[RMDB]
RNA sequence: GGGAACGACUCGAGUAGAGUCGAAAAGAUAUGGAUCGUGCUACCCACCCUUGCACUUUCGAAGAACGACAGCCAUCGGAAACGAUGGCUGUCGGGAGAAAGGGCAAGGAGGCACGAUCCUAAGUCACUAAUACUCACUGUUCGCAGUGAGUAUUAGAAAAGAAACAACAACAACAAC
Reactivity to DMS in 0.01 (KOAc 150mM, MgCl2 10mM, bicine 150mM(pH8.5), 24C), signal-to-noise 4, nucleotides 027 to 126: g010a120u010a110u000g000g010a010u000c000g050u000g000c010u000a120c050c040c100a300c060c010c000u000u000g000c000a020c010u000u000u000c000g000a150a110g000a090a280c000g010a020c000a000g020c010c000a020u000c000g000g000a100a050a130c010g000a020u000g000g000c000u000g010u000c000g000g000g000a100g000a000a000a000g010g010g010c000a000a000g000g010a030g000g000c010a010c010g000a010u000c000c000u020a000a100g000u010c080a150